Background: Chemical mapping of a 207-nucleotide RNA with DMS and 2A3.
RNA sequence: GGGAACGACUCGAGUAGAGUCGAAAACACAUAAAAAUAAAUGACAGAGCAGGGACUUAAACCCAGUGUGGUCUGAAUCCAUAUCUCACCCUCACCACUACAUAGUACCAGACCUUCAGGUUUAAUAGCCUCCCAGCAAGAAGGGUGUGGUAAAAUACAAGCAGCAUGAAUUCGUUCAUGCUGCUUGAAAAGAAACAACAACAACAAC
Reactivity to DMS in 0.01 (KOAc 150mM, MgCl2 10mM, bicine 150mM(pH8.5), 24C), signal-to-noise 1, nucleotides 027 to 156: c080a150c090a170u050a050a110a080a150a080u010a060a080a090u000g010a110c030a190g030a120g060c070a030g000g020g030a030c150u000u000a040a120a040c020c000c020a110g030u000g000u000g040g000u000c000u010g000a080a030u000c000c030a110u000a080u020c030u000c020a030c010c000c030u000c010a060c060c020a100c090u000a070c050a160u000a110g000u030a090c020c000a060g020a060c040c020u030u000c050a050g020g020u000u000u020a050a110u000a110g010c050c010u010c030c000c000a160g040c080a030a140g000a030a030g020g020g000u020g000u000g000g020u000a010a030a050a050u030a110
Reactivity to 2A3 in 0.01 (KOAc 150mM, MgCl2 10mM, bicine 150mM(pH8.5), 24C), signal-to-noise 2, nucleotides 027 to 156: c020a020c010a090u230a090a120a010a060a020u270a050a070a040u110g030a000c050a060g070a000g080c060a030g020g010g000a040c000u030u120a020a060a020c030c020c020a060g120u040g060u100g040g070u020c040u040g040a040a050u070c110c030a010u050a050u120c060u060c020a060c010c010c010u010c030a020c060c040a020c020u170a030c030a080u150a030g050u020a090c070c000a010g030a030c010c000u050u080c050a000g000g000u020u020u030a040a050u070a020g010c000c010u000c050c040c010a000g020c020a020a060g120a030a020g000g000g010u010g010u000g000g000u060a060a080a010a000u150a030
Notes
Reactivities are given for positions 27 through 156. The reactions ran in a buffer of 150 mM KOAc, 10 mM MgCl2 and 150 mM bicine (pH 8.5), at 24 C.